[RMDB]
RNA sequence: GGGAACGACUCGAGUAGAGUCGAAAAGAUAUGGACUGUAGGGAGCUCGCUUUCGGAAACGAAAGAGUGGAGCGAGGAUCUACUGUCCUAAGUCAAACGACUUUCACACUUCGGUGUGAAAGUCGAACUGGUCUCAUAAGUUCGCUUAUGAGACCAGAAAAGAAACAACAACAACAAC
Reactivity to DMS in 0.01 (KOAc 150mM, MgCl2 10mM, bicine 150mM(pH8.5), 24C), signal-to-noise 2, nucleotides 027 to 126: g000a020u000a010u010g000g000a000c010u000g020u000a020g000g000g000a010g020c000u000c010g010c000u010u000u000c000g000g000a000a000a010c000g010a010a000a020g000a030g010u020g030g010a000g040c000g010a040g020g000a040u000c000u000a010c000u000g000u010c000c000u000a000a080g000u000c010a090a120a240c020g010a010c000u000u000u000c000a000c000a030c000u000u010c250g030g010u000g030u010g000a000a000a000g020u010c000g010a010a060
Reactivity to 2A3 in 0.01 (KOAc 150mM, MgCl2 10mM, bicine 150mM(pH8.5), 24C), signal-to-noise 2, nucleotides 027 to 126: g010a000u010a010u040g020g000a000c000u020g000u000a010g010g030g000a010g000c000u010c010g010c010u010u000u000c010g010g000a000a020a000c000g010a010a010a000g070a060g160u300g300g020a010g050c010g020a080g000g000a000u000c000u000a010c020u030g000u010c000c000u000a010a000g020u000c000a060a050a070c020g010a000c000u000u000u010c010a000c000a010c000u030u170c300g080g000u000g000u000g000a000a000a000g000u010c000g000a000a010